[RMDB]
Annotation: The data come from the RNA Mapping Database (RMDB), library RFMREP. This 177-nucleotide RNA was probed chemically with DMS and 2A3. For 2A3, 1,271 sequencing reads were counted. Values cover nucleotides 27 to 126. The reactions ran in a buffer of 150 mM KOAc, 10 mM MgCl2 and 150 mM bicine (pH 8.5), at 24 C.

RNA sequence: GGGAACGACUCGAGUAGAGUCGAAAAUCAAUCUAUAUCGCACUGUGCAAGCCAGCAGUCGCCUUCCCGUCGUCGACCCGCGCCGUUCCAGCUUCCACUCUUUCGCUCACACGCACGGCGCCUCCCCGGUUGUACUAAGGUUCGCCUUAGUACAACCAAAAGAAACAACAACAACAAC
Reactivity to DMS in 0.01 (KOAc 150mM, MgCl2 10mM, bicine 150mM(pH8.5), 24C), signal-to-noise 1, nucleotides 027 to 126: u010c090a100a120u000c200u000a100u010a070u000c100g020c080a070c030u010g000u000g000c050a100a090g010c060c050a080g000c130a030g000u000c040g000c050c090u000u000c010c000c030g000u000c050g010u010c050g000a110c050c000c050g020c020g000c020c010g030u000u000c040c020a080g030c040u000u010c000c020a040c150u000c070u000u010u010c030g000c030u000c040a050c070a150c130g040c100a040c110g010g000c010g010c010c030u010c010c000c000c200
Reactivity to 2A3 in 0.01 (KOAc 150mM, MgCl2 10mM, bicine 150mM(pH8.5), 24C), signal-to-noise 1, nucleotides 027 to 126: u040c010a010a010u000c010u160a210u040a060u250c060g050c040a060c050u080g080u090g050c050a030a030g030c020c010a010g050c010a020g070u090c060g040c020c000u040u030c000c000c010g090u010c010g000u020c030g080a100c010c000c060g010c030g030c020c000g040u040u050c010c010a030g020c000u080u070c020c010a070c040u050c000u070u100u120c010g000c020u040c030a060c000a020c040g080c010a010c040g020g000c010g030c000c000u020c010c000c000c000